An RNA of 207 nucleotides, treated with 2A3 and DMS and read out base by base. For 2A3, 14,590 sequencing reads were counted. The RNA was probed in 150 mM KOAc, 10 mM MgCl2 and 150 mM bicine (pH 8.5) at 24 C. Reactivities are given for positions 27 through 156. The DMS profile rests on 6,882 reads. Source: RMDB library RNAMAK, as collected in RNAgym.
RNA sequence: GGGAACGACUCGAGUAGAGUCGAAAAGGGGUCGAUAUCUUCAGGAUUAUGCAACAGCUACCACCACGCUGAAGCCUCCACGGCGUGUUGGUAGACAUGCGUACCUGUUGGUAUCGACGGAGGCACCCAAACGCAUACCAGUUCGCUGGUAUGCGAAGUAAUCUUUGUUGUUCGCAACAAAGAUUACAAAAGAAACAACAACAACAAC
Reactivity to 2A3 in 0.01 (KOAc 150mM, MgCl2 10mM, bicine 150mM(pH8.5), 24C), signal-to-noise 6, nucleotides 027 to 156: g090g010g030g000u000c000g000a000u000a000u010c000u010u000c010a010g030g020a240u160u170a060u240g050c060a100a080c040a270g070c010u000a000c000c000a000c010c000a000c000g000c000u020g020a080a040g020c010c010u010c010c000a030c010g000g000c000g000u000g000u000u000g000g000u010a000g040a020c010a030u090g010c030g020u050a080c000c000u010g000u000u010g010g000u000a000u000c000g000a000c000g000g000a000g000g000c010a040c000c000c000a060a090a010c010g000c000a000u000a000c000c000a000g010u040u080c230g130c100u000g000g010u000a000u000g000c000g000a030a000
Reactivity to DMS in 0.01 (KOAc 150mM, MgCl2 10mM, bicine 150mM(pH8.5), 24C), signal-to-noise 2, nucleotides 027 to 156: g000g010g030g020u000c010g000a040u000a020u000c010u000u000c010a020g010g010a170u010u000a020u000g010c020a050a140c100a180g030c020u010a020c010c000a010c040c000a030c060g000c000u000g010a060a120g010c050c010u000c000c020a300c010g040g010c020g000u000g000u010u000g010g000u000a000g020a020c040a180u010g010c040g020u000a150c010c000u000g000u010u000g000g000u000a020u000c000g000a010c000g030g000a020g030g030c070a110c000c010c010a080a090a220c010g000c000a010u000a010c000c000a040g020u010u000c300g020c010u000g010g010u000a000u000g010c000g010a000a110